Source: RMDB library OK1LIB, as collected in RNAgym. Chemical mapping of a 177-nucleotide RNA with 2A3 and DMS. Values cover nucleotides 27 to 126. 2A3 is a SHAPE reagent: it acylates the 2'-hydroxyl of flexible nucleotides of all four kinds. The 2A3 profile rests on 1,338 reads.

RNA sequence: GGGAACGACUCGAGUAGAGUCGAAAAAUGUAUUCUUGUCUGAUAUUCAUGGAUUCAUUUGUAGGAGUAAUUUUCGACAUUACUGGAUGCAAGAUUCAAGUGGACGGGAAUGUUACGAAUGUCAGGAGAGUCCCUAAUACUUCGGUAUUAGGGACUCAAAAGAAACAACAACAACAAC
Reactivity to 2A3 in 0.01 (KOAc 150mM, MgCl2 10mM, bicine 150mM(pH8.5), 24C), signal-to-noise 3, nucleotides 027 to 126: a030u140g010u120a160u000u040c000u080u040g080u100c000u030g010a000u000a030u040u040c060a080u060g080g040a140u170u000c030a170u050u090u130g150u150a170g020g190a010g000u050a010a020u020u030u060u090c070g040a020c020a010u000u040a020c010u020g050g040a040u070g010c060a050a040g020a160u020u000c000a100a050g070u090g050g000a060c060g030g000g060a070a050u150g000u070u040a040c040g000a020a010u040g000u040c000a020g000g020a080
Reactivity to DMS in 0.01 (KOAc 150mM, MgCl2 10mM, bicine 150mM(pH8.5), 24C), signal-to-noise 2, nucleotides 027 to 126: a080u010g000u000a030u000u000c010u010u000g010u010c010u000g000a010u010a030u010u010c000a300u020g010g010a030u000u020c090a100u000u010u000g020u050a030g000g000a130g040u020a060a000u000u000u010u010c220g010a090c130a080u000u010a020c040u000g000g000a150u000g000c140a080a070g020a090u000u000c010a020a060g020u010g000g000a040c000g000g010g010a030a040u000g000u010u000a020c170g000a010a020u010g000u020c010a050g000g020a220